[RMDB]
RNA sequence: GGGAACGACUCGAGUAGAGUCGAAAAGCUAUCGGAGCAUGUCGUCACCCAGUUCAGGAGCCCGACUUCAUUAAGGGUCUGAAAGUCACAUUACAAAUGAGUUCAUGGGCUGUCGAUUAAUUAGUGACUUGGACAUAACGUUCGCGUUAUGUCCAAGAAAAGAAACAACAACAACAAC
Reactivity to 2A3 in 0.01 (KOAc 150mM, MgCl2 10mM, bicine 150mM(pH8.5), 24C), signal-to-noise 2, nucleotides 027 to 126: g060c020u080a050u170c080g000g040a080g070c060a050u100g010u000c020g000u010c000a090c040c020c010a020g040u040u030c030a020g040g090a100g080c000c010c000g030a090c040u110u070c120a060u060u150a060a020g000g000g110u010c010u070g070a010a020a010g010u000c000a000c000a120u050u250a160c070a040a120a080u110g010a030g040u010u120c050a110u110g010g000g030c020u030g050u000c010g010a030u070u100a100a130u040u050a110g060u010g070a050
Reactivity to DMS in 0.01 (KOAc 150mM, MgCl2 10mM, bicine 150mM(pH8.5), 24C), signal-to-noise 3, nucleotides 027 to 126: g000c030u000a070u010c080g010g020a110g020c050a130u020g020u000c000g010u020c080a150c030c020c010a100g010u000u010c050a060g000g010a110g020c010c010c020g010a090c150u010u000c150a070u000u000a090a110g010g000g020u000c040u000g000a050a050a080g020u000c030a020c050a110u010u010a080c230a030a100a060u000g000a050g000u010u000c110a140u010g020g000g010c130u000g000u000c070g000a060u000u010a070a090u010u010a050g010u000g010a110